[RMDB]
RNA sequence: GGGAACGACUCGAGUAGAGUCGAAAAAUGUUCGAAAUUACUGAAAUUAUAUGUGGCGUUGCCAUUAUUGAAGUGUUUCGUCGUGAUAAGGAGUUCAUCGCCGGGUCGCGUUUGACCUUUAACAUACGCUUUGAGAGCAAUUCGUUGCUCUCAAAGCAAAAGAAACAACAACAACAAC
Reactivity to 2A3 in 0.01 (KOAc 150mM, MgCl2 10mM, bicine 150mM(pH8.5), 24C), signal-to-noise 3, nucleotides 027 to 126: a000u070g010u000u060c000g000a020a040a030u270u210a080c000u020g060a040a070a120u230u110a110u090a090u190g070u100g000g070c240g270u250u290g040c000c000a000u020u030a020u020u030g040a050a000g020u020g010u000u010u000c000g000u000c020g030u020g050a050u060a080a060g090g040a060g080u040u100c040a020u050c090g070c040c000g050g020g000u040c050g000c000g160u020u050u110g070a100c010c000u040u070u040a010a000c000a020u110a100c040
Reactivity to DMS in 0.01 (KOAc 150mM, MgCl2 10mM, bicine 150mM(pH8.5), 24C), signal-to-noise 1, nucleotides 027 to 126: a070u010g000u040u000c000g000a000a040a000u000u040a010c000u060g000a200a010a090u060u040a040u040a130u190g000u010g000g030c000g000u000u170g010c000c000a010u040u000a060u010u000g000a210a150g030u000g030u000u080u000c010g010u000c010g060u000g010a140u020a080a000g000g000a070g010u020u040c100a080u000c000g010c000c080g000g030g000u000c040g000c060g000u000u000u000g000a060c010c010u000u030u000a060a080c130a060u000a020c150
Chemical mapping of a 177-nucleotide RNA with 2A3 and DMS.
Values are in units of 0.01, from 0 to 300, in steps of 10.
The RNA was probed in 150 mM KOAc, 10 mM MgCl2 and 150 mM bicine (pH 8.5) at 24 C.